[RMDB]
RNA sequence: GGGAACGACUCGAGUAGAGUCGAAAAUUUUGGCUGAGUAUGACCGACUUGAGGAAUACAAGGCUAACUUUGCCAUGAUUGAGGAGCAAGCACUUGAUUAUGAGUUGCCAGCGGAACCUUACACUAGAGCGUUGCAGAACGACACACCUCUAGUUGACAAAACAGUUUCUUUCGAGAAACUGUUUUGAAAAGAAACAACAACAACAAC
Reactivity to 2A3 in 0.01 (KOAc 150mM, MgCl2 10mM, bicine 150mM(pH8.5), 24C), signal-to-noise 5, nucleotides 027 to 156: u050u060u020u060g010g000c000u020g010a010g010u020a030u050g130a270c010c030g070a160c170u150u180g100a110g040g060a040a010u040a070c020a030a030g000g000c000u000a030a010c010u050u050u090g000c010c000a030u040g010a100u060u090g010a010g040g010a040g050c060a070a010g030c010a040c060u060u050g070a070u110u170a060u160g020a030g060u090u070g050c000c010a020g030c040g030g040a040a060c000c020u070u070a030c030a010c040u020a010g010a010g030c080g010u030u040g020c070a040g080a200a040c040g110a040c040a000c010a010c050c000u010c000u010a010g010u010u040g000a020
Reactivity to DMS in 0.01 (KOAc 150mM, MgCl2 10mM, bicine 150mM(pH8.5), 24C), signal-to-noise 3, nucleotides 027 to 156: u000u000u000u000g030g000c000u000g010a300g010u000a020u000g010a130c040c030g000a200c110u000u000g010a200g040g010a300a110u000a040c060a040a300g010g010c010u000a050a040c080u000u000u000g000c030c010a040u000g010a070u010u000g000a060g010g000a130g040c070a080a140g000c050a050c020u010u010g010a060u000u000a060u000g000a070g010u000u010g010c010c040a110g000c080g000g000a060a110c050c030u020u010a150c120a040c020u000a000g000a030g030c070g040u000u000g020c020a090g000a080a270c060g000a090c030a040c030a050c080c010u000c020u000a020g000u000u010g030a150